[RMDB]
RNA sequence: GGGAACGACUCGAGUAGAGUCGAAAACUGCAUUUGUAAUCCCAGUGCUGUCUUCUCACAGCCCAGGGGCUGCCCCCUUUCCCAUGUCUCUCAAGUGUCAGGGGACACCAUAAGUGCUGGAGGUGCCCGUCAUGUGUUUUUUCGAAAACACAUGACGAAAAGAAACAACAACAACAAC
Reactivity to 2A3 in 0.01 (KOAc 150mM, MgCl2 10mM, bicine 150mM(pH8.5), 24C), signal-to-noise 2, nucleotides 027 to 126: c000u040g010c020a060u090u110u180g120u140a110a100u030c010c020c020a030g010u030g000c010u020g050u070c060u150u020c050u050c030a100c000a020g000c000c000c000a070g160g000g000g000c050u040g030c000c000c000c010c060u020u000u000c020c010c000a020u040g050u000c010u010c000u000c060a090a080g050u010g100u190c000a030g060g030g010g010a000c020a010c010c010a070u110a190a010g010u050g050c030u040g000g030a080g060g000u040g070c020c030
Reactivity to DMS in 0.01 (KOAc 150mM, MgCl2 10mM, bicine 150mM(pH8.5), 24C), signal-to-noise 3, nucleotides 027 to 126: c070u010g010c060a080u030u000u020g000u010a100a120u010c050c020c020a110g020u010g010c020u010g000u000c090u000u000c070u010c110a140c040a060g020c010c020c050a100g000g010g020g030c090u000g030c030c020c000c000c010u000u000u000c000c010c020a170u010g000u000c040u000c040u010c080a100a090g000u000g010u010c070a100g000g010g000g020a010c020a050c080c060a100u000a060a110g010u000g000c030u000g010g010a110g010g010u000g010c030c070
About this RNA: Chemical mapping of a 177-nucleotide RNA with 2A3 and DMS. The RNA was probed in 150 mM KOAc, 10 mM MgCl2 and 150 mM bicine (pH 8.5) at 24 C. 2A3 adducts were read by reverse transcription with SuperScript II with manganese. For 2A3, 1,708 sequencing reads were counted.